[RMDB]
RNA sequence: GGGAACGACUCGAGUAGAGUCGAAAAGUUGAAACCCGAAUGCGUAAUGAAAGUGAAUUUCAGAUGUGAUCCGCAAGGUGCAACAUCGACCAGUCUGGAUCAUUUAUGUGAAGGUACUGAGUAAGAGCCGUGCAAUAUUCUUCGGAAUAUUGCACGGAAAAGAAACAACAACAACAAC
Reactivity to DMS in 0.01 (KOAc 150mM, MgCl2 10mM, bicine 150mM(pH8.5), 24C), signal-to-noise 2, nucleotides 027 to 126: g010u010u000g010a060a110a150c020c000c010g010a100a080u000g020c050g040u000a100a070u000g000a030a100a070g000u010g020a100a070u000u000u000c030a040g020a060u000g020u000g010a170u000c110c000g030c220a110a120g010g030u000g000c080a070a040c110a010u000c020g020a070c020c020a020g000u000c010u010g000g000a090u030c010a050u020u010u020a050u020g030u010g000a300a100g000g000u000a020c010u000g010a160g030u000a060a030g000a170g000